[RMDB]
RNA sequence: GGGAACGACUCGAGUAGAGUCGAAAACCAGGACGUCAAACAAACUAGACCCUGGCUAACCCACCGCGAUGAUGAUCAGUGCGGCCUAGUCCUGAGCGUGAAGCAGGUGUGUGGCUGUCCGUCUAGCGCAUAACACAACGUUCGCGUUGUGUUAUGCAAAAGAAACAACAACAACAAC
Reactivity to 2A3 in 0.01 (KOAc 150mM, MgCl2 10mM, bicine 150mM(pH8.5), 24C), signal-to-noise 2, nucleotides 027 to 126: c000c000a030g020g050a080c220g020u020c040a010a180a210c050a080a250a060c100u040a070g000a020c010c000c000u000g000g000c000u070a130a080c020c000c010a010c060c000g050c020g070a200u210g010a020u030g000a050u160c100a040g020u040g150c000g000g000c020c010u050a040g050u000c000c010u050g060a050g100c110g110u120g140a110a030g010c030a030g060g000u030g020u020g010u020g050g000c000u010g020u000c000c000g010u010c000u020a020g000c010
Reactivity to DMS in 0.01 (KOAc 150mM, MgCl2 10mM, bicine 150mM(pH8.5), 24C), signal-to-noise 1, nucleotides 027 to 126: c010c000a060g010g000a150c270g020u030c050a020a110a250c180a050a100a220c190u020a200g000a050c020c030c000u000g000g010c040u020a060a150c020c010c000a090c200c070g000c000g000a060u000g010a030u010g010a060u000c090a000g010u000g010c060g100g020c050c030u010a150g020u000c020c010u000g020a120g010c160g000u000g000a030a140g020c100a070g000g000u000g000u000g020u000g000g020c000u000g010u000c040c070g020u000c000u000a100g020c220